[RMDB]
RNA sequence: GGGAACGACUCGAGUAGAGUCGAAAAGAAAAACUCAGCACUGCGGAGUGAUUGGAUGGGUCCUAUCUUUUGAGAGAUCAGCUGUUCGUUGCCUUCUCCCGAGCAAAGAAACAUGCAAGCGCUGCGGCAUGGAAUACCUCUUCGGAGGUAUUCCAUGAAAAGAAACAACAACAACAAC
Reactivity to 2A3 in 0.01 (KOAc 150mM, MgCl2 10mM, bicine 150mM(pH8.5), 24C), signal-to-noise 1, nucleotides 027 to 126: g050a000a140a010a000a020c050u030c030a000g020c030a010c070u100g000c030g050g050a060g050u130g000a080u100u090g070g050a060u080g120g000g050u000c010c020u060a090u000c040u000u120u130u050g090a130g000a010g020a060u040c010a010g000c010u050g010u130u040c040g090u070u010g040c010c000u070u000c010u030c040c000c000g020a040g010c000a080a190a010g000a080a090a020c040a040u070g000c000a040a030g090c040g030c070u050g020c010g050g020
Reactivity to DMS in 0.01 (KOAc 150mM, MgCl2 10mM, bicine 150mM(pH8.5), 24C), signal-to-noise 2, nucleotides 027 to 126: g000a030a130a050a130a060c070u000c030a070g010c050a060c090u000g000c090g000g010a090g030u000g010a130u000u000g000g010a070u000g000g010g020u000c000c050u000a070u000c010u010u010u030u000g000a160g000a100g000a040u010c070a070g030c020u010g010u010u000c070g010u000u000g010c020c040u000u010c070u000c020c010c020g010a060g000c130a020a070a070g010a080a060a040c110a070u000g000c050a100a100g000c050g030c050u000g010c080g020g000

This 177-nucleotide RNA was probed chemically with 2A3 and DMS. Conditions: 150 mM KOAc, 10 mM MgCl2 and 150 mM bicine (pH 8.5), 24 C. 2A3 adducts were read by reverse transcription with SuperScript II with manganese. It was measured as part of the RMDB library RFMREP. Reactivities are given for positions 27 through 126.